[RMDB]
RNA sequence: GGGAACGACUCGAGUAGAGUCGAAAAGACAAAUAUACCAUUUAUCGUCAAAAAAUUGAUACCUAAAUUAUCGACACUCGCGGCCAAGCGAGUUGCCGAUUCGCAAAUUUGUAUUGCCGAUAUAAGUAAAUUGGAUUUUGAUUCAAUUGAUCAAGUACUUUCUUUGCGUUUUCGAACGCAAAGAAAGAAAAGAAACAACAACAACAAC
Reactivity to 2A3 in 0.01 (KOAc 150mM, MgCl2 10mM, bicine 150mM(pH8.5), 24C), signal-to-noise 1, nucleotides 027 to 156: g050a000c120a000a080a000u200a030u050a110c000c040a040u060u110u020a010u020c030g000u000c000a000a000a000a090a050a000u090u060g110a130u150a220c020c050u130a120a190a060u080u130a020u020c000g000a000c000a000c020u010c010g010c000g000g160c140c090a090a000g000c000g050a000g000u020u070g000c000c000g010a000u030u000c040g000c080a060a110a050u070u080u150g090u120a120u090u030g010c010c010g010a000u000a010u000a110a000g060u070a030a110a130u030u170g000g060a030u110u050u020u220g080a040u080u080c030a000a040u050u180g020a090u060c010a040a080g110u060a060
The record gives the reactivity of an RNA of 207 nucleotides to 2A3. Values are in units of 0.01, from 0 to 300, in steps of 10. 2A3 adducts were read by reverse transcription with SuperScript II with manganese. The RNA was probed in 150 mM KOAc, 10 mM MgCl2 and 150 mM bicine (pH 8.5) at 24 C. Source: RMDB library OK3TST, as collected in RNAgym.